[RMDB]
RNA sequence: GGGAACGACUCGAGUAGAGUCGAAAAAGGAGGAGGCAGGACAACUCGCUUCAGAAACAGCUAGAAGGAGACUGGGACCUCGAAAGCCGCCUCCUCGCAGGAGCACCAGCUGGAGCACAGCUACCGGGACCUCCUGCCUGGCUGUCCAGUCUCCUGAGCUGAGUAAUAAUUUCGAUUAUUACUCAGCAAAAGAAACAACAACAACAAC
Reactivity to DMS in 0.01 (KOAc 150mM, MgCl2 10mM, bicine 150mM(pH8.5), 24C), signal-to-noise 2, nucleotides 027 to 156: a090g000g000a020g020g020a050g010g040c010a110g040g000a160c050a060a090c040u000c040g070c050u010u010c060a200g000a210a100a130c040a090g000c020u000a100g000a180a070g010g000a060g010a060c000u000g010g030g010a130c040c040u000c040g020a080a090a130g000c000c010g000c000c010u000c010c000u000c020g000c060a050g000g000a040g020c030a120c000c010a050g000c010u000g000g000a270g010c140a160c050a090g000c010u000a020c090c080g000g010g010a170c120c010u000c000c010u000g010c000c060u020g010g030c030u000g000u000c000c030a110g010u000c020u000c000c000u000g020a210
Reactivity to 2A3 in 0.01 (KOAc 150mM, MgCl2 10mM, bicine 150mM(pH8.5), 24C), signal-to-noise 4, nucleotides 027 to 156: a000g070g000a000g000g000a000g000g020c100a070g050g060a070c030a110a080c060u040c080g020c000u120u100c130a060g180a100a100a030c080a020g030c040u080a040g040a140a040g100g000a010g000a000c000u010g010g020g070a060c050c080u110c160g050a130a070a010g050c010c020g000c010c010u010c000c000u000c010g000c000a010g000g010a010g010c040a040c050c000a020g020c000u040g000g070a120g100c150a010c010a200g010c020u100a150c090c150g020g010g020a060c010c000u000c000c000u010g000c000c020u070g030g000c010u030g030u050c000c000a000g000u000c000u000c000c000u010g000a010
Source information: This 207-nucleotide RNA was probed chemically with DMS and 2A3. The 2A3 profile rests on 3,097 reads. Conditions: 150 mM KOAc, 10 mM MgCl2 and 150 mM bicine (pH 8.5), 24 C.